[RMDB]
RNA sequence: GGGAACGACUCGAGUAGAGUCGAAAAGAUAUGGAUGGAUUCUGGAACUACCGAAGUCUUCGGAAACGAAGAAACUUCGGCCAGAGAUCCAUCCUAAGUCAAAAUCGCUUAUGUUCGCAUAAGCGAACUAGCCCAGUUAGUUCGCUAACUGGGCUAGAAAAGAAACAACAACAACAAC
Reactivity to DMS in 0.01 (KOAc 150mM, MgCl2 10mM, bicine 150mM(pH8.5), 24C), signal-to-noise 1, nucleotides 027 to 126: g010a090u010a300u000g000g000a000u000g000g000a000u000u000c030u000g010g030a080a020c110u010a300c000c000g000a000a010g000u010c010u000u010c000g000g000a080a070a210c010g000a010a000g000a180a100a050c000u000u000c000g000g010c000c000a010g000a010g000a020u000c000c000a000u000c010c010u020a010a110g010u020c020a120a040a060a110u000c040g010c000u000u000a010u000g020u000u010c220g000c020a010u000a010a000g000c000g000a010a080